This 207-nucleotide RNA was probed chemically with 2A3 and DMS. Source: RMDB library OK3TST, as collected in RNAgym. DMS adducts were read by reverse transcription with MarathonRT. The reactions ran in a buffer of 150 mM KOAc, 10 mM MgCl2 and 150 mM bicine (pH 8.5), at 24 C. For 2A3 the reverse transcriptase was SuperScript II with manganese.
[RMDB]
RNA sequence: GGGAACGACUCGAGUAGAGUCGAAAAGGUGUUCACCUGGCUCUGGCUGAGCGUGAUAAAGCCCGUGUUCCAGUUCAUCGGGUCGGCAAUCUCGGCUUGGUGGAAUUUGGUUGUCCUGCCCGUGUUCAACGCCGUGUGGGGGUUCCUGAAGAACACCCCAGUGACACGGGUUCGCCCGUGUCACUGGAAAAGAAACAACAACAACAAC
Reactivity to 2A3 in 0.01 (KOAc 150mM, MgCl2 10mM, bicine 150mM(pH8.5), 24C), signal-to-noise 2, nucleotides 027 to 156: g060g010u040g030u030u100c020a030c050c010u010g040g010c000u010c030u040g060g010c020u060g020a060g040c070g110u120g030a130u110a120a050a010g050c000c000c000g040u030g040u110u040c010c010a040g040u070u030c010a040u100c080g010g000g060u020c010g020g000c040a100a080u100c090u040c050g060g010c100u030u010g020g050u100g060g070a070a060u100u090u100g020g000u030u120g030u080c010c000u020g020c020c030c020g030u060g010u130u120c120a170a030c050g020c020c010g070u070g010u080g040g010g000g010g030u030u050c040c050u110g030a100a030g010a050a000c010a080c040c000
Reactivity to DMS in 0.01 (KOAc 150mM, MgCl2 10mM, bicine 150mM(pH8.5), 24C), signal-to-noise 2, nucleotides 027 to 156: g000g020u010g020u000u010c040a170c030c010u010g000g000c020u000c050u000g020g030c050u000g010a080g020c040g050u000g010a130u010a060a140a140g010c000c000c000g050u000g020u000u010c040c030a220g010u000u000c030a020u010c030g050g020g020u000c270g030g010c050a140a070u000c080u000c040g030g040c030u000u000g010g030u020g000g020a040a140u000u000u000g000g020u000u010g010u000c030c020u000g020c010c000c000g020u000g000u000u000c050a100a080c040g040c050c080g010u010g020u010g000g040g000g040g000u010u000c010c030u020g020a100a190g000a020a050c020a060c020c010